Record summary:
Source: RMDB library OK3TST, as collected in RNAgym. The record gives the reactivity of an RNA of 207 nucleotides to 2A3 and DMS. The 2A3 profile rests on 2,562 reads.
[RMDB]
RNA sequence: GGGAACGACUCGAGUAGAGUCGAAAAGAUAGAUAGUACUCGUAAAAACUCUCUUUCGCAGGCCGCGUAUUUUGAGAGACGAAGCCGUGAAGUAGCGAAAGCUACGACGAAGCGCGUGAGCGGCCGAUGCGCGAACAGCAUCAUGUACGAGUACGAAAGGAUAGGAGUAUUUCGAUACUCCUAUCCUAAAAGAAACAACAACAACAAC
Reactivity to 2A3 in 0.01 (KOAc 150mM, MgCl2 10mM, bicine 150mM(pH8.5), 24C), signal-to-noise 2, nucleotides 027 to 156: g050a040u160a010g050a050u100a040g010u010a000c000u000c000g010u010a000a010a030a110a120c030u030c000u000c060u060u100u140c120g010c070a040g000g030c010c000g000c010g020u090a250u050u160u130u090g100a070g000a000g000a010c020g020a040a010g000c010c000g020u060g110a210a020g020u010a000g000c010g000a020a040a040g020c000u000a010c010g030a010c010g060a100a020g020c060g010c010g070u050g020a010g000c000g000g000c010c010g000a000u020g020c010g000c020g020a060a050c050a040g030c000a020u050c010a010u190g010u080a000c010g000a000g000u010a000c000g000a040a020
Reactivity to DMS in 0.01 (KOAc 150mM, MgCl2 10mM, bicine 150mM(pH8.5), 24C), signal-to-noise 2, nucleotides 027 to 156: g020a180u000a070g000a190u010a120g020u000a030c010u000c010g000u000a020a030a150a140a150c040u000c040u000c000u000u010u000c060g040c010a150g020g060c020c020g100c010g000u010a110u020u010u000u000g010a110g000a050g030a090c110g010a100a090g050c000c000g080u010g030a070a300g020u000a010g010c020g000a180a120a230g000c000u000a000c000g010a120c100g020a140a080g040c020g030c020g000u000g000a060g010c060g000g020c010c010g040a010u000g030c020g000c070g010a070a060c120a050g020c030a070u000c080a180u000g040u000a050c000g000a020g000u000a020c020g020a080a220